[RMDB]
RNA sequence: GGGAACGACUCGAGUAGAGUCGAAAACGAGAUGAGUUCGCUCAUCUCGAAAGAACCGCGGCCGUGACUCGGUCAGAGCAUGACAGGCGCUGCGGUCACGAAAAAGUGGUGUGUUCGCACACCACAAGACUGGUCAGUGGUUCGCCACUGACCAGUCAAAAGAAACAACAACAACAAC
Reactivity to 2A3 in 0.01 (KOAc 150mM, MgCl2 10mM, bicine 150mM(pH8.5), 24C), signal-to-noise 1, nucleotides 027 to 126: c010g000a000g000a000u000g000a000g000u060u090c150g050c060u000c010a000u000c000u000c010g020a000a010a010g020a070a010c000c010g010c010g030g000c000c000g070u040g120a230c030u000c060g070g020u130c160a020g010a010g010c070a040u040g110a070c030a070g030g090c040g000c080u030g000c000g010g000u000c020a060c060g100a090a080a030a010a000g000u000g000g020u000g000u010g040u040u080c190g030c050a000c000a000c000c030a000c000a000a010
Reactivity to DMS in 0.01 (KOAc 150mM, MgCl2 10mM, bicine 150mM(pH8.5), 24C), signal-to-noise 1, nucleotides 027 to 126: c040g010a030g010a020u000g000a000g050u030u020c150g020c000u000c000a000u000c000u000c000g000a070a070a070g000a170a070c080c020g040c020g020g000c010c050g030u010g000a060c000u000c050g020g010u020c130a020g000a120g050c140a080u010g020a070c150a100g000g010c070g000c010u000g020c000g000g000u000c040a010c050g010a030a040a080a090a050g000u000g000g000u000g040u000g010u000u010c220g000c040a000c000a020c000c000a000c010a050a040
Structure probing data (2A3 and DMS) for a 177-nucleotide construct. It was measured as part of the RMDB library M2PK50. For DMS the reverse transcriptase was MarathonRT. Reactivities are given for positions 27 through 126. The reactions ran in a buffer of 150 mM KOAc, 10 mM MgCl2 and 150 mM bicine (pH 8.5), at 24 C.